Background: This 207-nucleotide RNA was probed chemically with DMS and 2A3. Reactivities are rounded to 0.1 and cut off at 0 and 3. The reactions ran in a buffer of 150 mM KOAc, 10 mM MgCl2 and 150 mM bicine (pH 8.5), at 24 C.

[RMDB]
RNA sequence: GGGAACGACUCGAGUAGAGUCGAAAACAGGGGUCCCCCGAGCUCAUUAAGCGUGUCGGAGGGUUGUCUUCGUCAUCAACACACACAGUUUAUAAUAACUGGCAAAUCAAACAAUAAUUUCGCAGUAGCUGCCUAAUCGCACUCUGCAUCGCCUAACGAAUAAAUAGCACUUCGGUGCUAUUUAUUCAAAAGAAACAACAACAACAAC
Reactivity to DMS in 0.01 (KOAc 150mM, MgCl2 10mM, bicine 150mM(pH8.5), 24C), signal-to-noise 1, nucleotides 027 to 156: c030a040g010g010g010g000u000c020c010c000c020c020g030a210g040c030u030c030a070u000u000a070a100g000c070g030u010g030u010c010g020g000a130g000g010g030u000u000g000u000c020u000u000c130g030u000c070a080u000c140a070a120c070a150c030a120c080a130c050a040g000u000u000u000a120u000a200a090u010a010a030c020u000g000g010c040a030a080a120u000c080a030a060a090c070a080a090u000a040a190u010u000u000c130g040c020a090g010u020a070g020c050u010g060c000c020u000a040a110u000c100g000c000a030c020u010c020u000g000c070a110u020c040g000c000c000u000a070a150c190
Reactivity to 2A3 in 0.01 (KOAc 150mM, MgCl2 10mM, bicine 150mM(pH8.5), 24C), signal-to-noise 1, nucleotides 027 to 156: c040a010g000g000g020g030u040c000c000c020c000c000g060a020g020c010u050c040a050u170u180a130a030g010c050g020u110g070u120c010g000g050a040g040g010g000u150u020g020u020c020u020u020c000g100u020c030a020u010c010a010a060c010a000c020a000c000a020c020a000g000u020u040u090a230u040a240a080u130a080a000c010u020g050g020c050a060a030a100u130c080a110a050a140c080a030a070u130a170a160u060u230u270c110g000c010a000g000u210a010g060c100u020g000c000c000u080a020a010u100c030g020c020a020c020u010c000u000g000c000a010u080c080g000c010c020u070a050a010c040